Chemical mapping of a 177-nucleotide RNA with DMS and 2A3. Values cover nucleotides 27 to 126. The RNA was probed in 150 mM KOAc, 10 mM MgCl2 and 150 mM bicine (pH 8.5) at 24 C. The data come from the RNA Mapping Database (RMDB), libraries RFM100 and RFMREP. For 2A3, 1,414 sequencing reads were counted.

RNA sequence: GGGAACGACUCGAGUAGAGUCGAAAAGUAAAUCCUAAGCGAGCCUGAGAUAGUGAGAGUCAGGUGAUUGAGAGAUAAGUGUGGCGCUUUCUGUAGUAUUUUCAAAAACAAUGAAGUAAUAAAUUAGCAAUUGAGUAAACUUCGGUUUACUCAAUUGAAAAGAAACAACAACAACAAC
Reactivity to DMS in 0.01 (KOAc 150mM, MgCl2 10mM, bicine 150mM(pH8.5), 24C), signal-to-noise 4, nucleotides 027 to 126: g010u010a060a060a100u020c010c040u010a060a030g010c010g000a050g010c020c000u000g010a020g000a040u010a070g010u000g010a060g000a030g010u000c020a020g000g030u000g010a060u010u020g010a130g030a090g010a070u000a070a100g010u000g020u000g000g010c080g010c040u000u010u010c020u010g010u010a070g020u020a030u000u010u010u000c040a030a060a060a070a060c130a070a090u010g000a050a090g010u010a040a060u010a030a060a130u010u020a070g020
Reactivity to 2A3 in 0.01 (KOAc 150mM, MgCl2 10mM, bicine 150mM(pH8.5), 24C), signal-to-noise 2, nucleotides 027 to 126: g010u010a000a090a040u020c030c020u000a020a050g110c030g010a000g000c030c000u020g020a020g000a010u160a010g010u020g000a030g000a040g010u020c000a000g000g000u040g000a020u110u110g050a060g010a000g000a040u060a130a170g050u040g050u020g120g020c040g010c080u020u060u030c010u130g040u010a040g050u050a160u080u020u060u040c060a190a040a010a000a000c070a010a220u260g090a150a000g120u100a010a260u110a070a060a100u080u080a020g050